Overview
Conditions: 150 mM KOAc, 10 mM MgCl2 and 150 mM bicine (pH 8.5), 24 C. Chemical mapping of a 207-nucleotide RNA with 2A3 and DMS. 2A3 adducts were read by reverse transcription with SuperScript II with manganese. For DMS, 2,377 sequencing reads were counted. Source: RMDB library OK3TST, as collected in RNAgym.

[RMDB]
RNA sequence: GGGAACGACUCGAGUAGAGUCGAAAAAACAACUGAGUGCGCCGAGCUGUCCAGGCGUGUAUGCAUUCUUUCUCAAUUGCCAAGAUGCGAUCGCCCCUUUUGAGGUGCCGACCAACGGGCUUAUCUACAUUGGCAAGUCGGCGAAUCUGGCACAGCGGCGUAGAGUGUUAUUCGUAACACUCUACGCAAAAGAAACAACAACAACAAC
Reactivity to 2A3 in 0.01 (KOAc 150mM, MgCl2 10mM, bicine 150mM(pH8.5), 24C), signal-to-noise 2, nucleotides 027 to 156: a000a000c090a010a030c090u080g000a020g080u090g010c020g010c040c030g100a070g000c000u000g030u020c030c030a020g060g000c050g050u070g000u070a080u250g030c010a010u030u060c000u030u100u030c120u010c050a100a230u070u030g000c010c000a040a030g060a130u150g110c060g070a070u150c090g030c000c000c000c020u000u150u140u100g100a100g020g010u060g130c040c000g040a030c000c000a050a000c040g000g020g010c000u010u020a010u100c010u020a060c040a200u020u030g000g010c000a000a030g040u060c010g000g000c020g020a000a030u060c060u010g020g000c070a020c010a050g010c020g050
Reactivity to DMS in 0.01 (KOAc 150mM, MgCl2 10mM, bicine 150mM(pH8.5), 24C), signal-to-noise 1, nucleotides 027 to 156: a070a080c030a020a030c040u000g000a050g050u000g000c010g030c050c080g010a140g000c050u000g000u000c040c040a160g000g040c040g000u010g000u010a080u030g030c030a090u000u000c020u000u000u000c060u000c020a090a110u010u000g010c050c050a080a100g010a080u000g020c020g000a110u010c150g030c000c010c000c040u020u010u020u010g010a120g030g000u010g040c020c030g000a110c020c040a100a100c110g000g010g010c060u000u000a030u000c030u000a120c050a110u000u000g000g030c040a010a090g030u000c020g000g010c050g010a050a080u010c000u010g030g010c070a030c080a060g060c020g020